Chemical mapping of a 207-nucleotide RNA with 2A3 and DMS. The DMS profile rests on 4,156 reads. Reactivities are given for positions 27 through 156. Source: RMDB library RNAMAK, as collected in RNAgym.
RNA sequence: GGGAACGACUCGAGUAGAGUCGAAAAGAUAUGGAGUAUUGCUAGGCUACAGACUACUUUGAUCUUUCUUCGGAAACGAAGAAAGGGAGUAGUCUCGUAGCCUUGGACCAAUACUCCUAAGUCAAAAUCUUAGUCAGCGUUCGCGCUGACUAAGAAACCAUAUACAUAUGUUCGCAUAUGUAUAUGGAAAAGAAACAACAACAACAAC
Reactivity to 2A3 in 0.01 (KOAc 150mM, MgCl2 10mM, bicine 150mM(pH8.5), 24C), signal-to-noise 5, nucleotides 027 to 156: g030a020u070a050u170g000g000a010g010u000a000u000u010g020c010u020a000g010g000c000u000a000c000a010g000a010c000u000a000c010u140u190u150g200a210u160c010u010u000u000c000u000u000c000g010g030a100a090a070c010g010a000a000g000a010a010a000g000g000g000a010g000u000a000g000u040c050u000c010g000u010a010g000c000c000u000u020g000g010a010c070c020a000a000u000a000c000u000c000c000u010a070a010g010u000c010a020a040a030a280u000c000u000u010a000g000u000c000a000g000c010g040u070u110c180g010c000g000c120u010g000a000c000u000a000a000g000a000a000a000
Reactivity to DMS in 0.01 (KOAc 150mM, MgCl2 10mM, bicine 150mM(pH8.5), 24C), signal-to-noise 2, nucleotides 027 to 156: g010a090u000a270u010g060g020a060g030u000a010u010u020g010c030u000a000g060g010c000u000a000c000a060g010a040c000u000a000c010u020u000u000g020a120u000c000u000u000u000c000u010u000c000g030g010a180a120a290c010g000a030a020g020a000a020a000g010g010g020a010g020u000a010g010u000c010u000c070g090u000a000g000c000c000u000u010g040g020a110c260c010a010a010u000a000c000u000c000c000u000a020a070g000u000c060a110a070a100a170u010c000u000u010a010g000u010c000a000g000c010g020u010u000c300g060c050g010c000u000g000a010c000u000a000a000g010a010a060a100